An RNA of 177 nucleotides, treated with DMS and 2A3 and read out base by base. The data come from the RNA Mapping Database (RMDB), library OK2TRN. Conditions: 150 mM KOAc, 10 mM MgCl2 and 150 mM bicine (pH 8.5), 24 C. 2A3 adducts were read by reverse transcription with SuperScript II with manganese. DMS adducts were read by reverse transcription with MarathonRT.

RNA sequence: GGGAACGACUCGAGUAGAGUCGAAAAGACUGUCUCACUGACUGUCUCACUCAGUGUCAGUGACAGUGUCAGUCUCACUGACAGACUGACAGAGUCUCAGUGUGUCUCUGUGACACUGACAGUGAGAUCAGUCGAGAGGCUUCGGCCUCUCGACUGAAAAAGAAACAACAACAACAAC
Reactivity to DMS in 0.01 (KOAc 150mM, MgCl2 10mM, bicine 150mM(pH8.5), 24C), signal-to-noise 1, nucleotides 027 to 126: g010a040c040u000g000u000c050u000c090a060c060u000g010a080c020u010g010u010c020u000c080a080c080u010c080a030g010u000g000u000c010a020g030u000g000a020c030a080g010u010g000u010c000a010g000u000c050u000c050a160c140u000g010a210c120a020g000a070c010u020g000a050c030a050g000a140g000u000c060u000c030a010g020u000g000u000g000u000c070u000c260u000g010u000g000a020c000a020c030u000g000a050c050a040g010u000g000a020g000a050
Reactivity to 2A3 in 0.01 (KOAc 150mM, MgCl2 10mM, bicine 150mM(pH8.5), 24C), signal-to-noise 1, nucleotides 027 to 126: g050a010c050u030g000u020c000u010c050a060c030u040g000a000c010u050g040u010c040u030c090a080c040u190c040a040g050u000g000u070c010a000g000u000g030a020c010a020g070u010g020u060c000a000g010u040c030u000c020a170c050u000g020a050c010a070g010a020c010u020g020a010c010a000g220a000g010u000c010u020c100a110g030u100g010u020g030u090c000u010c060u270g130u090g030a020c000a000c000u000g020a030c000a020g010u000g020a000g000a020